[RMDB]
RNA sequence: GGGAACGACUCGAGUAGAGUCGAAAAGAUAUGGAUAGUCUACCCACCCAGGUAGCCGUUGAAAUCGGAAACGAUGGAGGCUAGUCUGGAGGACUAUCCUAAGUCAAAAGGCUACUUCGGUAGCCAACCAUAGAAAGUGCUUCGGCACUUUCUAUGGAAAAGAAACAACAACAACAAC
Reactivity to 2A3 in 0.01 (KOAc 150mM, MgCl2 10mM, bicine 150mM(pH8.5), 24C), signal-to-noise 1, nucleotides 027 to 126: g050a090u180a110u300g020g010a010u000a000g000u030c010u100a300c030c010c040a010c000c020c000a000g010g060u000a000g000c020c000g090u210u080g050a010a030a000u040c020g030g050a070a020a040c000g040a000u050g050g000a010g000g000c000u020a020g200u080c010u010g000g020a020g050g000a000c000u000a000u020c000c000u000a040a020g140u130c160a050a060a040a090g000g000c000u010a000c000u070u140c230g150g010u020a020g000c060c000a000a000
Reactivity to DMS in 0.01 (KOAc 150mM, MgCl2 10mM, bicine 150mM(pH8.5), 24C), signal-to-noise 2, nucleotides 027 to 126: g010a080u010a190u000g020g010a040u000a000g010u010c020u000a120c000c000c030a300c080c030c000a030g000g000u010a000g000c010c000g000u000u020g000a110a090a020u000c000g000g000a030a040a130c020g000a030u000g000g000a120g000g000c000u000a020g010u020c010u010g000g060a130g040g000a010c000u000a000u000c000c010u010a000a120g010u000c180a080a090a080a120g000g000c000u000a000c000u000u000c150g010g000u000a020g000c000c000a030a050